[RMDB]
RNA sequence: GGGAACGACUCGAGUAGAGUCGAAAACGAGACCUACCAGUUCUUCAGGGUGUACCAGGCGGUGCAGCGGUUUGUGGUGGCGGACCUGUCCAACUGGUACCUGGAUGUGAUCAAGGACCGCCUGUACCCUUUAAUCUUGUUUCGACAAGAUUAAAGGAAAAGAAACAACAACAACAAC
Reactivity to 2A3 in 0.01 (KOAc 150mM, MgCl2 10mM, bicine 150mM(pH8.5), 24C), signal-to-noise 6, nucleotides 027 to 126: c030g030a020g070a080c010c010u030a040c010c020a040g020u030u030c010u090u070c050a040g060g050g010u090g010u060a070c050c030a030g050g020c010g040g000u060g040c020a020g020c040g060g040u040u080u120g080u070g060g060u030g040g010c010g000g010a030c000c020u020g030u020c010c000a030a020c030u040g040g020u040a070c000c010u020g000g030a040u060g080u160g100a070u100c060a050a020g020g010a040c000c010g020c000c010u040g020u090a080c000
Reactivity to DMS in 0.01 (KOAc 150mM, MgCl2 10mM, bicine 150mM(pH8.5), 24C), signal-to-noise 8, nucleotides 027 to 126: c120g010a110g010a100c040c030u000a080c030c030a130g010u010u000c040u000u000c090a080g000g010g010u000g010u000a050c110c040a060g010g020c100g000g010u000g010c040a070g010c100g000g000u000u000u000g010u000g010g010u000g020g020c030g010g000a070c030c020u000g000u000c020c020a040a110c050u000g000g010u000a060c150c070u000g000g000a060u010g000u000g010a070u010c120a100a110g000g000a080c010c010g010c020c010u000g000u010a090c110